[RMDB]
RNA sequence: GGGAACGACUCGAGUAGAGUCGAAAACGGCCGCCAUGAAGCUGACGCGGAAGAUGGUUCUGACCCGGGCCAAGGCCUCGGAGCUGCACAGCGUGCGCAAGCUCAACUGCUGGUGAGGCGGGGCCUGGCCUCCUCAGAGGUUCGCCUCUGAGGAGGCAAAAGAAACAACAACAACAAC
Reactivity to 2A3 in 0.01 (KOAc 150mM, MgCl2 10mM, bicine 150mM(pH8.5), 24C), signal-to-noise 2, nucleotides 027 to 126: c020g030g000c040c060g000c010c040a150u140g110a080a010g050c050u100g080a050c060g030c020g080g030a020a050g070a070u110g040g000u110u030c070u090g110a110c000c030c000g000g000g050c010c010a000a020g090g020c000c000u000c020g000g060a050g020c030u130g010c050a000c030a120g120c100g080u070g030c020g020c040a110a000g000c030u040c030a150a190c100u220g040c020u120g000g090u090g010a020g010g030c000g000g010g000g000c000c020u000g060
Reactivity to DMS in 0.01 (KOAc 150mM, MgCl2 10mM, bicine 150mM(pH8.5), 24C), signal-to-noise 2, nucleotides 027 to 126: c110g030g000c070c000g020c030c040a020u020g010a260a170g010c030u000g000a160c120g020c040g010g010a090a040g010a100u000g000g010u010u000c050u010g000a140c040c020c070g040g000g000c010c030a070a070g020g000c000c000u000c000g000g000a070g010c000u010g020c020a060c070a110g010c150g020u000g010c000g040c240a050a090g010c030u000c080a170a050c130u010g000c060u010g010g010u020g030a080g030g020c010g020g020g010g010c010c000u000g000